Structure probing data (2A3 and DMS) for a 177-nucleotide construct.
For 2A3 the reverse transcriptase was SuperScript II with manganese.
It was measured as part of the RMDB library M2PK50.
The reactions ran in a buffer of 150 mM KOAc, 10 mM MgCl2 and 150 mM bicine (pH 8.5), at 24 C.
For 2A3, 4,292 sequencing reads were counted.
The DMS profile rests on 2,616 reads.
[RMDB]
RNA sequence: GGGAACGACUCGAGUAGAGUCGAAAAGGAACGUUGUUCGCAACGUUCCGUGCCGGAUACGGACAUGACGAUCGCGCGCAUGUCGGGAAACCGUAAACGCGAGCAUCAUGGUGUUCGCACCAUGAAACUGUUUGCUCCAAUUCGUUGGAGCAAACAGAAAAGAAACAACAACAACAAC
Reactivity to 2A3 in 0.01 (KOAc 150mM, MgCl2 10mM, bicine 150mM(pH8.5), 24C), signal-to-noise 2, nucleotides 027 to 126: g010g000a000a000c020g010u000u010g010u030u050c210g000c100a000a000c000g000u000u000c000c000g000u010g030c010c010g050g040a130u140a170c070g140g010a000c000a000u030g100a120c010g010a050u040c030g000c000g000c000g000c020a000u010g020u060c000g010g040g000a110a030a010c030c020g030u120a090a140a040c010g000c010g010a010g050c010a080u040c000a020u000g030g000u000g030u040u050c190g030c060a000c000c000a000u000g000a070a010a010
Reactivity to DMS in 0.01 (KOAc 150mM, MgCl2 10mM, bicine 150mM(pH8.5), 24C), signal-to-noise 3, nucleotides 027 to 126: g010g000a010a000c010g020u000u000g020u000u010c180g030c020a010a010c010g010u000u000c000c000g020u010g020c050c030g000g010a140u010a060c020g000g000a050c010a020u000g000a110c020g020a060u000c070g000c000g000c040g000c040a090u010g000u000c010g010g010g020a080a100a150c300c000g000u000a030a110a070c040g000c000g000a030g010c300a150u000c010a020u000g010g020u000g010u000u010c160g000c010a010c000c010a020u000g000a040a060a160